Structure probing data (2A3) for a 207-nucleotide construct. For 2A3 the reverse transcriptase was SuperScript II with manganese.

[RMDB]
RNA sequence: GGGAACGACUCGAGUAGAGUCGAAAAUCUCACGAGUAUGCACACAACUAGUCAGUUGUGUGCCAUGGUAACGCGUUACCAUGGCAUACUCGAGUGUGAGUAGGUAACGCGUUACCUACUCAAUGUUCUCGCAAGAACAUUGCACACUCGUGAGAAACGUAACUUGGUAGUUCGCUACCAAGUUACGAAAAGAAACAACAACAACAAC
Reactivity to 2A3 in 0.01 (KOAc 150mM, MgCl2 10mM, bicine 150mM(pH8.5), 24C), signal-to-noise 1, nucleotides 027 to 156: u010c010u010c000a000c000g000a010g000u060a060u200g000c000a000c020a000c010a030a010c040u140a100g300u300c180a020g000u110u020g000u020g050u020g000c000c000a000u050g000g010u010a030a000c010g000c000g050u000u000a000c000c000a110u180g140g000c000a020u050a020c020u060c110g050a270g030u130g090u120g010a060g010u070a090g020g000u010a000a020c000g000c000g020u000u000a010c000c000u000a020c000u010c000a000a000u000g000u000u010c050u020c090g130c150a120a040g000a000a000c000a000u000u020g000c100a030c000a000c080u000c000g000u010g000a000g000a020a000a000